Chemical mapping of a 177-nucleotide RNA with 2A3 and DMS. The data come from the RNA Mapping Database (RMDB), library OK2TST. The RNA was probed in 150 mM KOAc, 10 mM MgCl2 and 150 mM bicine (pH 8.5) at 24 C. The DMS profile rests on 13,721 reads.
RNA sequence: GGGAACGACUCGAGUAGAGUCGAAAAAUGAGACUGAGACGGAAGCAAAUGAAGAGAAGAAGAUAGUAUGUGACGUCUGCGGGCUUGAGUUUAGCAAUAAACAAGCACUCAGGGCACAUAAGAAGAAGAUAAUGACAUACUUCGGUAUGUCAUUAUCAAAAGAAACAACAACAACAAC
Reactivity to 2A3 in 0.01 (KOAc 150mM, MgCl2 10mM, bicine 150mM(pH8.5), 24C), signal-to-noise 6, nucleotides 027 to 126: a010u070g000a020g010a020c040u020g000a010g010a040c040g020g010a050a020g030c030a040a060a100u170g020a080a050g050a010g020a110a010g040a030a020g030a050u120a070g100u030a040u020g030u000g050a090c030g190u000c000u010g000c030g000g000g010c010u060u040g070a090g120u050u020u020a020g010c010a030a040u020a070a030a010c000a010a000g000c010a010c040u010c000a000g030g010g000c000a000c000a020u060a020a040g120a060a010g030a090a010
Reactivity to DMS in 0.01 (KOAc 150mM, MgCl2 10mM, bicine 150mM(pH8.5), 24C), signal-to-noise 8, nucleotides 027 to 126: a060u000g000a070g010a060c060u010g010a060g010a050c060g010g000a060a050g010c080a050a080a080u010g010a090a070g010a120g010a060a060g000a060a060g010a080u010a100g020u000a020u000g010u000g000a100c040g010u000c010u000g010c200g010g000g010c010u000u000g000a110g010u000u000u000a010g000c290a070a110u000a010a010a020c010a020a010g000c000a040c010u000c000a000g000g000g000c000a010c010a010u010a030a070g010a090a110g000a090a090

For DMS the reverse transcriptase was MarathonRT.